[RMDB]
RNA sequence: GGGAACGACUCGAGUAGAGUCGAAAAGUGAGUUCAUGGCUGGAAACAAUCAACAGGUGAAACCCAAGAAAGAUCGUGGUAUGAUUAAGAAGACCUUAACGGCGGCGAUCCCUUUUGCGGUUGUAACUAAAGGGGCUUUUGCUCAAGAGAUGCAACACUCAACUAUAUCUUUCGAGAUAUAGUUGAGAAAAGAAACAACAACAACAAC
Reactivity to 2A3 in 0.01 (KOAc 150mM, MgCl2 10mM, bicine 150mM(pH8.5), 24C), signal-to-noise 2, nucleotides 027 to 156: g050u020g000a040g020u040u070c040a040u070g040g000c000u020g020g030a080a080a050c060a040a100u130c050a030a100c020a090g010g020u070g020a070a020a010c020c000c010a010a030g020a030a040a000g020a010u030c030g020u070g080g000u090a130u190g100a200u100u020a030a020g050a050a030g040a090c000c000u010u020a050a010c020g010g010c010g020g000c000g010a020u020c010c000c010u050u040u070u050g050c050g000g010u000u000g030u060a040a030c040u050a050a060a090g060g010g000g000c030u110u110u090u190g020c000u020c050a030a000g040a000g010a090u080g010c010a050a010c020a020
Reactivity to DMS in 0.01 (KOAc 150mM, MgCl2 10mM, bicine 150mM(pH8.5), 24C), signal-to-noise 2, nucleotides 027 to 156: g040u020g010a090g010u000u010c040a130u000g010g000c040u010g050g000a080a040a080c040a060a130u010c030a020a080c060a060g000g010u020g010a100a080a100c030c010c010a050a100g060a050a070a090g000a050u000c050g030u000g020g040u000a100u000g010a130u000u000a060a120g010a060a160g010a090c100c010u000u000a050a060c050g030g000c040g050g030c010g010a040u000c000c010c030u000u020u010u010g010c130g000g030u000u000g010u000a060a100c050u010a010a060a110g000g000g000g010c080u000u000u000u000g010c040u010c000a030a090g010a120g030a110u000g000c040a060a090c080a180